[RMDB]
Structure probing data (DMS and 2A3) for a 207-nucleotide construct.
The 2A3 profile rests on 6,485 reads.
2A3 adducts were read by reverse transcription with SuperScript II with manganese.
The data come from the RNA Mapping Database (RMDB), library OK3TST.
RNA sequence: GGGAACGACUCGAGUAGAGUCGAAAAUGAAGAUGCUCGCGCUAUGGUCUUCGCGGACGUGCACGGACGGCGCAUGUCUUUCGAAUGCUACAGCUUCGUACGUUUACAUACCGACCCGCCGACGCGUGUGGAGGAACUGAGUCUGCGCGUUAAGCGCACCACUAGAUCAGUUCGCUGAUCUAGUGGUAAAAGAAACAACAACAACAAC
Reactivity to DMS in 0.01 (KOAc 150mM, MgCl2 10mM, bicine 150mM(pH8.5), 24C), signal-to-noise 3, nucleotides 027 to 156: u010g020a060a090g020a100u000g020c030u000c030g060c300g000c050u010a060u010g030g000u010c170u000u010c110g060c300g020g020a010c020g040u000g010c030a060c010g050g040a090c080g020g000c090g030c030a030u010g020u000c030u000u000u000c040g020a070a050u010g020c010u000a040c010a050g040c030u000u000c010g000u000a050c050g020u000u000u020a120c030a110u000a140c060c030g020a100c020c030c020g020c040c040g000a060c090g030c020g020u000g000u000g010g010a150g010g020a060a140c100u000g010a160g040u010c050u000g000c000g040c030g020u000u000a070a140g020c000g010c030
Reactivity to 2A3 in 0.01 (KOAc 150mM, MgCl2 10mM, bicine 150mM(pH8.5), 24C), signal-to-noise 6, nucleotides 027 to 156: u170g020a030a030g060a060u080g050c030u040c050g010c020g010c030u050a060u150g020g000u030c020u020u030c020g010c030g030g020a040c030g010u030g010c060a030c080g080g070a040c060g040g030c040g000c030a010u030g000u010c000u040u150u080c020g050a050a040u140g020c030u080a060c020a050g010c000u020u050c030g030u030a050c020g030u010u080u070a060c040a040u100a090c000c040g090a120c020c010c010g000c040c030g030a060c030g030c040g010u090g050u080g040g010a050g020g050a070a050c070u070g030a060g140u050c050u090g000c010g000c000g030u040u140a110a040g010c000g000c000